[RMDB]
RNA sequence: GGGAACGACUCGAGUAGAGUCGAAAAUCAAUCAUGCAUAAAAUUCAGAAUGCCUGAGUUUCCAUACAAGUACAGGAAAGCAUGCACAUACAUGUAAAAUGUAUAUGCGACAACACAGUGUAUAGAAUGAAGAGUAUAUAUCCACAAUAUAAGUAUACGUGAUCAUGAUAUUCGUAUCAUGAUCACGAAAAGAAACAACAACAACAAC
Reactivity to 2A3 in 0.01 (KOAc 150mM, MgCl2 10mM, bicine 150mM(pH8.5), 24C), signal-to-noise 7, nucleotides 027 to 156: u090c020a010a050u020c020a020u040g010c010a020u160a170a210a060a070u220u100c030a060g120a220a090u060g040c000c000u030g010a040g020u000u050u000c040c020a030u050a160c040a080a110g070u020a090c040a020g050g040a070a040a010g040c030a020u110g000c020a020c010a050u080a010c010a010u060g050u270a060a150a100a040u010g020u000a020u010a000u040g050c030g050a040c060a100a010c040a010c030a070g040u020g040u100a050u020a080g130a090a050u130g030a080a040g030a010g120u010a010u000a000u010a020u180c040c030a060c050a110a020u180a020u070a220a070g080u090a060u060a150
Reactivity to DMS in 0.01 (KOAc 150mM, MgCl2 10mM, bicine 150mM(pH8.5), 24C), signal-to-noise 2, nucleotides 027 to 156: u010c040a120a110u010c040a150u000g010c020a110u000a050a010a070a080u000u000c040a140g050a230a090u010g020c040c020u000g000a130g040u000u000u000c030c080a150u000a050c060a090a140g040u020a070c050a110g000g040a170a060a120g010c060a090u000g020c000a010c030a000u000a000c020a000u020g000u000a080a070a140a010u000g020u010a000u000a000u000g000c000g020a080c070a070a080c070a100c060a050g010u010g020u000a060u000a030g000a060a100u000g000a100a100g000a150g000u000a050u000a030u000a070u000c020c010a050c040a070a120u000a130u000a040a190g010u000a080u000a150
Background
An RNA of 207 nucleotides, treated with 2A3 and DMS and read out base by base. Conditions: 150 mM KOAc, 10 mM MgCl2 and 150 mM bicine (pH 8.5), 24 C. For 2A3 the reverse transcriptase was SuperScript II with manganese.